An RNA of 170 nucleotides, treated with DMS and 2A3 and read out base by base.
[RMDB]
RNA sequence: GGGAACGACUCGAGUAGAGUCGAAAAGGGGACCGUCCCUCGGCAAUGGCGAAUGGGACCCAGAACUCUCUCAGAAUCUAGGGAGAUCUCCCAGAUUCGAGAGAAAACUGGCUCUCCCUUAGCCAUCAUACUUACGCCUUCGGGCGUAAGAAAAGAAACAACAACAACAAC
Reactivity to DMS in 0.01 (KOAc 150mM, MgCl2 10mM, bicine 150mM(pH8.5), 24C), signal-to-noise 3, nucleotides 027 to 129: g030g000g050g020a000c110c020g030u040c020c000c020u040c070g010g040c110a000a000u010g000g030c000g000a120a050u010g000g050g060a050c060c000c000a020g040a140a300c210u020c000u000c020u020c000a090g030a090a000u000c010u040a240g000g000g000a060g000a130u070c180u000c020c010c030a000g030a030u000u000c020g000a000g010a000g070a000a020a060a270c010u030g030g000c030u020c100u000c040c000c020u020u040a200g010c000c010a030u030c170a050u040a090
Reactivity to 2A3 in 0.01 (KOAc 150mM, MgCl2 10mM, bicine 150mM(pH8.5), 24C), signal-to-noise 3, nucleotides 027 to 129: g000g020g000g000a020c000c040g090u120c040c000c020u030c050g040g010c050a020a010u030g020g000c000g000a050a000u050g000g000g000a020c030c000c000a000g000a060a040c030u000c000u000c000u000c040a130g000a000a000u000c010u190a180g000g060g000a040g020a160u090c130u020c130c000c000a020g000a010u000u000c000g000a000g010a000g000a010a000a000a010c000u000g000g020c010u000c020u020c000c000c000u000u010a010g020c000c000a020u020c000a010u030a020
The DMS profile rests on 10,548 reads.
The data come from the RNA Mapping Database (RMDB), library 15KLIB.
Conditions: 150 mM KOAc, 10 mM MgCl2 and 150 mM bicine (pH 8.5), 24 C.